[RMDB]
RNA sequence: GGGAACGACUCGAGUAGAGUCGAAAAGACAAUUUCAACGACAAAACCAUAAUCAAGGUAGUCGGCGUCGGUGGAGCCGGUGGUAACGCCGUCAACCGAAUGAUCACCGAGGGUUUGCAGAACGUAGGGAUAUAGUAUCCUUCGGGAUACUAUAUCCAAAAGAAACAACAACAACAAC
Reactivity to 2A3 in 0.01 (KOAc 150mM, MgCl2 10mM, bicine 150mM(pH8.5), 24C), signal-to-noise 5, nucleotides 027 to 126: g050a010c040a060a050u060u120u110c080a130a050c040g100a030c030a010a100a020a020c030c010a060u110a170a070u180c060a110a000g010g020u010a020g040u030c010g010g010c040g020u100c020g000g030u050g070g040a060g090c070c030g010g020u050g010g050u070a110a020c020g000c000c000g020u030c010a010a020c000c010g030a030a060u080g020a030u060c020a010c070c010g010a080g010g010g010u020u040u070g050c050a050g040a160a040c070g040u110a100g070
Reactivity to DMS in 0.01 (KOAc 150mM, MgCl2 10mM, bicine 150mM(pH8.5), 24C), signal-to-noise 7, nucleotides 027 to 126: g010a110c150a110a080u000u000u000c060a080a100c050g010a130c040a060a040a040a040c020c020a110u010a110a120u020c130a070a120g000g010u000a060g020u000c010g020g020c150g020u000c010g020g010u000g010g010a150g010c140c020g010g010u000g010g000u010a100a140c020g020c000c010g020u010c030a100a020c010c010g000a040a050u000g000a060u000c080a050c070c040g010a120g010g000g000u000u000u000g000c050a130g010a080a070c150g010u020a100g000
An RNA of 177 nucleotides, treated with 2A3 and DMS and read out base by base. High DMS reactivity at an A or C suggests that its Watson-Crick edge is free. For 2A3 the reverse transcriptase was SuperScript II with manganese. DMS adducts were read by reverse transcription with MarathonRT. Source: RMDB library OK2TST, as collected in RNAgym. For 2A3, 7,385 sequencing reads were counted.